Structure probing data (2A3 and DMS) for a 177-nucleotide construct. The RNA was probed in 150 mM KOAc, 10 mM MgCl2 and 150 mM bicine (pH 8.5) at 24 C. DMS adducts were read by reverse transcription with MarathonRT.
RNA sequence: GGGAACGACUCGAGUAGAGUCGAAAAGGUGCCCUAUUCGGAGCACUGCAGUUCCCGAUAGAAAGGCUAAGCACCUCGCAAUGAGGUAAGGUGGGACUGUUCCUUCUGGAGCCAAGCGGUUGGCUCCCACGACCAUUCUGUUCGCAGAAUGGUCGUGAAAAGAAACAACAACAACAAC
Reactivity to 2A3 in 0.01 (KOAc 150mM, MgCl2 10mM, bicine 150mM(pH8.5), 24C), signal-to-noise 1, nucleotides 027 to 126: g040g010u000g000c040c020c020u090a300u150u300c190g040g000a040g040c010a000c030u010g040c010a010g000u060u080c000c010c010g020a010u040a070g110a050a190a000g000g080c120u210a120a020g050c050a050c010c040u010c010g050c160a250a260u300g010a000g040g030u040a050a080g000g060u160g010g000g010a010c010u010g000u020u090c010c000u030u080c040u070g000g000a000g010c000c010a040a010g130c080g180g090u020u020g040g000c000u020c000c010
Reactivity to DMS in 0.01 (KOAc 150mM, MgCl2 10mM, bicine 150mM(pH8.5), 24C), signal-to-noise 1, nucleotides 027 to 126: g000g000u000g000c000c000c000u000a150u000u020c190g020g010a070g030c000a000c000u010g000c030a040g010u010u000c000c000c000g000a100u000a080g020a150a060a110g020g010c050u020a060a130g020c100a070c010c000u000c020g010c180a120a110u000g010a010g000g010u000a030a060g020g000u000g010g010g000a030c020u000g020u000u000c020c020u000u000c150u010g000g020a020g020c000c000a000a050g000c240g000g000u000u000g000g010c000u000c000c000